[RMDB]
RNA sequence: GGGAACGACUCGAGUAGAGUCGAAAAAACAAUAACACACCUUUUAGCAUUAUUAGCUUGGAUUAAUGAAGUGGUUGACAUCUCCAAUACAGCAUGUUUUCUGUACUCCAAAUCAUAGCUAGCACUAACAGCUCAUAUGAUUCGUCAUAUGAGCUGUAAAAGAAACAACAACAACAAC
Reactivity to 2A3 in 0.01 (KOAc 150mM, MgCl2 10mM, bicine 150mM(pH8.5), 24C), signal-to-noise 3, nucleotides 027 to 126: a000a000c120a090a030u150a130a000c020a000c000a040c030c000u040u080u060u100a030g030c030a040u040u050a070u060u100a220g000c010u030u080g110g000a040u090u080a090a060u190g050a040a020g040u020g060g020u050u020g020a010c010a030u020c020u000c030c010a040a020u090a090c020a010g020c030a030u060g060u020u040u060u000c000u020g050u030a060c020u030c020c000a030a080a090u060c010a020u000a040g010c020u030a010g060c070a030c100u060a050
Reactivity to DMS in 0.01 (KOAc 150mM, MgCl2 10mM, bicine 150mM(pH8.5), 24C), signal-to-noise 3, nucleotides 027 to 126: a050a070c080a070a060u010a060a070c070a090c070a090c060c030u010u000u010u010a070g020c010a070u000u010a080u010u000a070g020c040u000u000g010g000a060u000u000a040a050u000g000a050a030g020u010g010g000u000u000g010a060c040a030u000c040u000c030c060a070a080u000a050c220a030g020c110a020u000g020u010u000u010u010c020u000g010u000a050c050u000c010c030a030a030a030u000c040a080u000a050g000c010u000a060g020c090a080c120u010a040